[RMDB]
Structure probing data (2A3 and DMS) for a 177-nucleotide construct. DMS adducts were read by reverse transcription with MarathonRT. It was measured as part of the RMDB library TTRINS.
RNA sequence: GGGAACGACUCGAGUAGAGUCGAAAAGAUAUGGAGUAGCGGAGCUUGGAUUUAUGGCUACAGGAACUGUGGUCGGAAACGACCAUGAAAUCCCUGUAGCCAUUGUCAGCUCGGCUACUCCUAAGUCCCGUAAUCAAUACUUCGGUAUUGAUUACGGAAAAGAAACAACAACAACAAC
Reactivity to 2A3 in 0.01 (KOAc 150mM, MgCl2 10mM, bicine 150mM(pH8.5), 24C), signal-to-noise 3, nucleotides 027 to 126: g030a020u130a090u300g000g010a020g020u000a000g020c300g170g020a010g020c070u220u300g240g040a130u130u300u300a010u080g000g020c000u000a010c000a010g030g000a040a110c290u300g000u000g000g000u000c000g030g060a080a080a030c020g020a040c000c000a000u000g050a000a010a010u040c000c010c020u010g000u000a000g010c010c010a000u000u000g000u000c000a000g000c020u010c000g000g020c000u000a010c010u000c000c000u020a010a000g010u000c040
Reactivity to DMS in 0.01 (KOAc 150mM, MgCl2 10mM, bicine 150mM(pH8.5), 24C), signal-to-noise 1, nucleotides 027 to 126: g020a110u010a300u000g010g000a040g020u000a020g020c000g020g020a010g000c000u000u020g040g010a020u010u010u000a000u000g000g020c000u000a010c020a010g010g010a050a040c100u000g000u000g000g000u010c010g000g000a150a070a250c000g020a020c000c000a020u010g000a100a200a200u010c050c000c000u010g010u000a000g000c000c010a000u000u000g000u010c020a010g000c020u000c010g000g020c000u000a000c010u000c000c010u000a000a050g010u000c050
2A3 adducts were read by reverse transcription with SuperScript II with manganese.